The record gives the reactivity of an RNA of 177 nucleotides to 2A3 and DMS. High DMS reactivity at an A or C suggests that its Watson-Crick edge is free. Values cover nucleotides 27 to 126. DMS adducts were read by reverse transcription with MarathonRT.

RNA sequence: GGGAACGACUCGAGUAGAGUCGAAAAUGACGGGAAAAAUUUCAGACGUCAACAACUCUUGGAUGGAUGAAUUGGAGAAGGUGCUUGAUGAUGAAGAUCAAUUGAUCUCUCGAAGCGAAAUCGAAACAAUUGUGGUAACAUUCGUGUUACCACAAUUAAAAGAAACAACAACAACAAC
Reactivity to 2A3 in 0.01 (KOAc 150mM, MgCl2 10mM, bicine 150mM(pH8.5), 24C), signal-to-noise 4, nucleotides 027 to 126: u060g020a000c020g030g020g090a040a050a070a230a270u090u160u060c070a070g050a110c010g010u010c000a000a020c020a010a010c010u080c010u090u120g070g030a050u050g030g030a030u040g070a100a140u110u050g040g000a080g000a080a040g030g040u100g040c020u050u050g030a080u070g020a030u100g050a140a040g020a010u020c020a040a240u180u260g020a020u010c020u010c000u000c040g040a030a000g000c030g000a100a040a050u080c070g030a070a060a010c080
Reactivity to DMS in 0.01 (KOAc 150mM, MgCl2 10mM, bicine 150mM(pH8.5), 24C), signal-to-noise 8, nucleotides 027 to 126: u000g010a040c040g020g020g010a040a070a100a120a140u000u010u000c050a110g010a190c040g010u010c020a040a110c120a070a100c070u000c050u010u000g010g010a060u000g010g010a110u000g010a060a080u000u000g010g000a070g010a060a070g010g010u000g010c060u000u000g010a090u010g020a080u010g010a090a040g010a020u000c020a200a130u010u000g000a030u000c020u000c040u000c020g010a070a050g010c080g000a030a070a070u000c050g010a080a080a070c210